[RMDB]
This 170-nucleotide RNA was probed chemically with 2A3 and DMS.
RNA sequence: GGGAACGACUCGAGUAGAGUCGAAAACCCCCAGGAGGUCCCCCCAGGAAUGGCGGGACCCCACUCUGCAGGGUCCGCGUUCCAUUCUUUCUUACCUUGUGGCCGGCAUGGUCCCAGCCUCCUCGCUAACGCUGAAACUUCGGUUUCAGCAAAAGAAACAACAACAACAAC
Reactivity to 2A3 in 0.01 (KOAc 150mM, MgCl2 10mM, bicine 150mM(pH8.5), 24C), signal-to-noise 6, nucleotides 027 to 129: c010c010c000c000c020a010g010g020a010g020g030u090c000c000c000c000c000c000a020g020g030a030a010u030g090g020c000g030g000g000a010c000c000c000c000a030c010u270c060u120g070c120a060g000g010g030u000c000c010g140c000g070u120u060c010c000a040u020u000c000u040u090u010c070u070u070a150c020c020u040u060g040u120g040g000c010c010g060g070c090a110u180g020g000u020c040c010c000a020g020c000c010u000c000c000u010c020g020c050u060a060a010c090
Reactivity to DMS in 0.01 (KOAc 150mM, MgCl2 10mM, bicine 150mM(pH8.5), 24C), signal-to-noise 4, nucleotides 027 to 129: c010c030c010c030c080a000g000g000a070g000g000u040c010c030c020c010c030c030a070g000g000a070a030u000g010g040c030g010g010g000a060c020c010c000c040a060c120u070c110u000g070c100a190g010g010g020u020c030c020g000c040g000u050u060c000c000a040u020u020c000u020u020u080c070u050u040a040c080c090u000u050g030u000g040g040c050c040g000g070c040a080u090g040g000u000c050c030c030a160g040c000c010u010c000c000u010c000g010c060u000a050a100c180

2A3 adducts were read by reverse transcription with SuperScript II with manganese. The data come from the RNA Mapping Database (RMDB), library 15KLIB. The reactions ran in a buffer of 150 mM KOAc, 10 mM MgCl2 and 150 mM bicine (pH 8.5), at 24 C.